[RMDB]
RNA sequence: GGGAACGACUCGAGUAGAGUCGAAAAUGAAUUGCAUAAAUGGUGGAGUCAGUUAAUCUUGAAGGAGUACCAUGGAAACAACAGGAUAAAGAAAUUGUUGCUAGAAGCCUGGGAAGAUCAUUUGGAAACAGAAUUGAACGUUCGCGUUCAAUUCUGUAAAAGAAACAACAACAACAAC
Reactivity to 2A3 in 0.01 (KOAc 150mM, MgCl2 10mM, bicine 150mM(pH8.5), 24C), signal-to-noise 1, nucleotides 027 to 126: u160g000a000a000u080u200g050c020a000u130a190a100a070u060g000g000u020g120g040a020g020u020c050a000g000u000u110a020a080u100c080u010u000g090a030a180g110g040a160g060u000a000c020c020a170u100g000g210a190a000a000c000a000a000c000a000g110g000a030u190a190a210a000g020a000a210a040u000u050g030u000u200g000c000u000a040g130a140a060g050c000c000u000g000g150g000a020a020g020a040u040c000a000u160u020u020g190g000a000a300
Reactivity to DMS in 0.01 (KOAc 150mM, MgCl2 10mM, bicine 150mM(pH8.5), 24C), signal-to-noise 1, nucleotides 027 to 126: u030g010a130a080u080u010g000c160a040u010a080a090a080u000g000g020u000g020g030a120g020u000c020a050g000u020u010a140a110u000c100u010u000g000a140a020g000g000a190g020u040a050c000c010a040u000g000g040a060a060a070c050a080a080c010a010g000g000a130u000a230a100a050g020a010a060a080u000u000g020u000u000g000c080u010a040g000a050a100g000c020c030u000g040g000g000a110a060g010a000u010c010a010u000u000u000g000g000a230a050

The record gives the reactivity of an RNA of 177 nucleotides to 2A3 and DMS.
For DMS, 1,516 sequencing reads were counted.
2A3 adducts were read by reverse transcription with SuperScript II with manganese.
Reactivities are given for positions 27 through 126.